[RMDB]
RNA sequence: GGGAACGACUCGAGUAGAGUCGAAAACGGCUGUUGCCAAUAAACCACAGGCGGUAGCCGGUAGCAUGACGAUACUGUCAAAGUGGCCAGCCUGAAGAUAGUAAGUUCCGGCGACACUCAGCCAGCCGGUGGAUCAUCCUUUCGAGGAUGAUCCACCAAAAGAAACAACAACAACAAC
Reactivity to DMS in 0.01 (KOAc 150mM, MgCl2 10mM, bicine 150mM(pH8.5), 24C), signal-to-noise 1, nucleotides 027 to 126: c030g020g020c000u010g000u000u030g010c000c060a100a110u020a040a190a100c130c100a160c060a200g000g060c000g000g030u000a000g030c050c030g010g010u020a050g020c120a060u010g020a070c000g010a140u000a020c020u000g020u000c020a030a200a090g010u000g000g020c030c040a070g020c060c000u000g000a080a070g060a070u000a120g000u000a070a140g000u000u000c000c020g030g000c020g000a100c120a050c080u020c120a060g000c050c020a070g010c040c000
Reactivity to 2A3 in 0.01 (KOAc 150mM, MgCl2 10mM, bicine 150mM(pH8.5), 24C), signal-to-noise 1, nucleotides 027 to 126: c010g000g020c020u000g050u150u120g000c000c020a040a120u200a030a180a060c060c060a040c050a090g000g010c010g030g050u020a030g000c040c010g030g000u010a050g020c070a070u090g050a010c010g070a100u150a240c080u120g000u000c040a040a120a060g060u070g050g010c090c010a060g000c000c020u080g000a040a030g020a090u200a030g150u130a130a150g040u050u000c010c040g010g000c000g000a010c010a010c020u130c000a020g000c010c000a000g010c000c060
The record gives the reactivity of an RNA of 177 nucleotides to DMS and 2A3.
Values are in units of 0.01, from 0 to 300, in steps of 10.
The reactions ran in a buffer of 150 mM KOAc, 10 mM MgCl2 and 150 mM bicine (pH 8.5), at 24 C.
2A3 adducts were read by reverse transcription with SuperScript II with manganese.
For DMS, 604 sequencing reads were counted.